[RMDB]
RNA sequence: GGGAACGACUCGAGUAGAGUCGAAAAAUUGAUGCGAAGGGGGGACGGAGUAGGCUAUGUUGGCCGGGCGACGGUUGUCCCGGUUUAAGCGUGUAGGCUGGUUUUCCAGGCAAAUCCGGAAAUUGAAAUGAGAAGAGGAGUUCGCUCCUCUUCUCAUAAAAGAAACAACAACAACAAC
Reactivity to DMS in 0.01 (KOAc 150mM, MgCl2 10mM, bicine 150mM(pH8.5), 24C), signal-to-noise 1, nucleotides 027 to 126: a080u000u000g000a110u000g020c040g010a130a100g000g020g000g020g000g010a090c040g020g000a050g020u000a100g000g020c080u000a110u030g000u000u000g020g010c020c030g040g000g010c300g000a060c160g030g000u000u000g010u010c030c000c000g000g020u000u000u000a030a140g030c070g000u010g030u000a050g000g000c040u000g000g020u010u000u000u020c030c050a160g010g000c110a000a050a100u000c050c030g000g030a030a010a100u000u000g000a100a100

This 177-nucleotide RNA was probed chemically with DMS. Conditions: 150 mM KOAc, 10 mM MgCl2 and 150 mM bicine (pH 8.5), 24 C. The data come from the RNA Mapping Database (RMDB), library M2PK90.